[RMDB]
RNA sequence: GGGAACGACUCGAGUAGAGUCGAAAACUACAUUAGUAUGUCACUUGUAUUAGUCAUUGUAGUGAAGAGAUUGUACAACCCAUCACUUUCUAACUUUGCGUUAGCAUUGUGCAGUGGUGUAAUGUGGAUAGAGGCCUGUUCGCAGGCCUCAAAAGAAACAACAACAACAAC
Reactivity to DMS in 0.01 (KOAc 150mM, MgCl2 10mM, bicine 150mM(pH8.5), 24C), signal-to-noise 3, nucleotides 027 to 129: c020u030a000c040a020u040u010a030g040u030a000u000g030u030c080a130c070u030u020g030u040a110u000u000a060g020u030c080a060u020u020g010u000a030g020u040g010a140a060g020a050g010a050u010u010g050u030a070c070a030a090c060c090c010a120u020c000a010c060u030u020u020c040u110a050a080c070u030u010u020g030c100g040u030u050a000g000c070a010u040u020g020u000g000c200a010g030u000g000g000u040g020u020a020a100u030g000u000g020g010a110u000a090
Reactivity to 2A3 in 0.01 (KOAc 150mM, MgCl2 10mM, bicine 150mM(pH8.5), 24C), signal-to-noise 3, nucleotides 027 to 129: c040u060a020c020a040u030u000a060g120u040a120u090g060u040c070a030c040u080u090g030u050a040u040u130a070g040u030c030a040u010u040g060u030a110g010u020g020a050a000g040a000g030a000u040u120g020u000a020c000a040a050c010c000c000a000u030c000a050c010u020u160u070c040u080a070a040c000u010u050u160g040c040g060u010u020a070g000c050a050u020u060g020u000g040c050a060g000u010g040g020u020g020u020a020a060u050g030u020g050g000a000u000a140
This 170-nucleotide RNA was probed chemically with DMS and 2A3. DMS adducts were read by reverse transcription with MarathonRT. For 2A3, 4,195 sequencing reads were counted. Reactivities are given for positions 27 through 129. Conditions: 150 mM KOAc, 10 mM MgCl2 and 150 mM bicine (pH 8.5), 24 C. 2A3 adducts were read by reverse transcription with SuperScript II with manganese.